[RMDB]
RNA sequence: GGGAACGACUCGAGUAGAGUCGAAAAACCCCGUGGAAGAUCAUUUGAGCCUCAGCUACGGGAAGAGCUGGAUGCAGGCCGGGGAAGCGGAUUGGUGGACUGCACAUUCAUUUAAGGUUGAAAUGCUUAGCAUUGUAAAGGUGACUGUGAAUUUUAACCUAGUCCAGCUAUUCGUAGCUGGACUAGGAAAAGAAACAACAACAACAAC
Reactivity to 2A3 in 0.01 (KOAc 150mM, MgCl2 10mM, bicine 150mM(pH8.5), 24C), signal-to-noise 2, nucleotides 027 to 156: a000c020c000c000c030g090u060g020g020a060a030g000a110u040c030a060u060u140u220g040a040g030c000c010u050c040a000g010c000u050a050c120g030g000g020a020a060g000a000g010c040u040g030g000a000u110g080c080a020g020g100c020c010g010g000g000g010a040a020g010c020g040g030a050u060u040g010g000u060g030g070a030c010u050g030c050a050c010a050u060u080c000a030u030u060u200a070a010g070g040u020u000g050a050a020a020u060g030c080u080u050a040g000c000a070u000u080g100u110a060a050a100g000g040u020g040a020c050u000g030u030g070a100a120u030u030u040u120a050a000